[RMDB]
RNA sequence: GGGAACGACUCGAGUAGAGUCGAAAAGGGGACCCAACCGAGAACUUUGGGGUGAAUCGGCCUCACCGCCCUCGACGCGAGGACGGUCCGCCGUAGGGCAAACCUUCCGCGCCACACCGCCCGAACCAUCGACAGAUUAAUUCGUUAAUCUGUCGAUAAAAGAAACAACAACAACAAC
Reactivity to DMS in 0.01 (KOAc 150mM, MgCl2 10mM, bicine 150mM(pH8.5), 24C), signal-to-noise 9, nucleotides 027 to 126: g000g000g010g000a150c030c020c020a080a100c070c040g000a090g000a080a090c110u000u010u020g000g000g030g000u010g010a100a080u020c040g000g010c030c050u010c150a060c020c020g000c020c000c010u000c010g010a160c200g020c070g010a020g010g000a020c020g000g020u010c190c250g000c010c020g000u020a070g000g000g010c040a060a090a080c060c040u010u010c040c030g010c060g000c040c030a070c060a060c060c060g000c000c010c010g010a080a110c130c070
Reactivity to 2A3 in 0.01 (KOAc 150mM, MgCl2 10mM, bicine 150mM(pH8.5), 24C), signal-to-noise 9, nucleotides 027 to 126: g020g000g010g040a040c010c000c010a010a010c030c020g070a050g030a160a070c070u090u100u130g050g020g010g000u030g060a030a090u100c030g020g000c010c010u060c040a020c000c010g010c010c010c010u020c020g210a230c100g040c100g090a020g010g010a010c010g010g010u020c020c030g000c000c010g030u050a030g000g030g000c030a050a040a080c000c000u050u020c010c010g020c010g010c020c000a040c000a010c010c030g020c000c000c010g010a040a030c020c010

Structure probing data (DMS and 2A3) for a 177-nucleotide construct. Values cover nucleotides 27 to 126. For 2A3 the reverse transcriptase was SuperScript II with manganese. DMS adducts were read by reverse transcription with MarathonRT.